[RMDB]
An RNA of 207 nucleotides, treated with 2A3 and DMS and read out base by base. Reactivities are given for positions 27 through 156. The 2A3 profile rests on 1,142 reads. Conditions: 150 mM KOAc, 10 mM MgCl2 and 150 mM bicine (pH 8.5), 24 C. For DMS the reverse transcriptase was MarathonRT.

RNA sequence: GGGAACGACUCGAGUAGAGUCGAAAAUUAAGACACUAUUAAUACUCCUUAUUUGACAAAUGAGGAAAAAGCACAGAGAAAUUUAGCAACUUGUCUAAGGUCACACAGCUGGGAUUUGAACCAAACUGUUUGACCCCAAAGUUUGUGCUUUUAACCAUGCUUUCUAUGUAUUCGUACAUAGAAAGCAAAAAGAAACAACAACAACAAC
Reactivity to 2A3 in 0.01 (KOAc 150mM, MgCl2 10mM, bicine 150mM(pH8.5), 24C), signal-to-noise 2, nucleotides 027 to 156: u070u030a080a020g140a040c040a010c090u160a120u300u090a210a070u160a160c040u040c040c000u030u020a040u080u020u050g120a080c050a020a040a020u040g000a050g030g000a030a050a030a030a000g000c030a000c010a010g110a010g090a090a150a090u180u260u100a100g050c020a000a110c100u110u060g020u110c050u080a040a020g000g000u000c000a000c010a000c010a040g000c020u010g020g010g130a260u250u290u230g040a060a030c000c000a000a020a120c000u000g010u040u000u020g000a000c000c000c000c010a080a150a010g020u060u010u060g000u010g000c000u010u020u000u020a040a010c020c030a030
Reactivity to DMS in 0.01 (KOAc 150mM, MgCl2 10mM, bicine 150mM(pH8.5), 24C), signal-to-noise 1, nucleotides 027 to 156: u010u000a090a080g030a240c000a130c030u000a100u000u010a060a110u000a130c150u010c000c000u000u000a060u010u000u000g020a170c140a130a120a060u020g030a030g020g000a170a040a080a080a040g000c040a010c020a080g020a200g000a140a110a110u000u000u000a100g020c060a100a120c050u010u000g000u000c050u000a110a090g010g010u000c000a060c040a030c000a010g010c020u000g020g000g000a100u000u000u000g000a190a270c000c000a050a020a020c020u000g010u000u000u020g010a080c000c000c060c040a030a050a070g000u000u000u000g010u000g030c010u020u000u000u010a050a130c080c020a300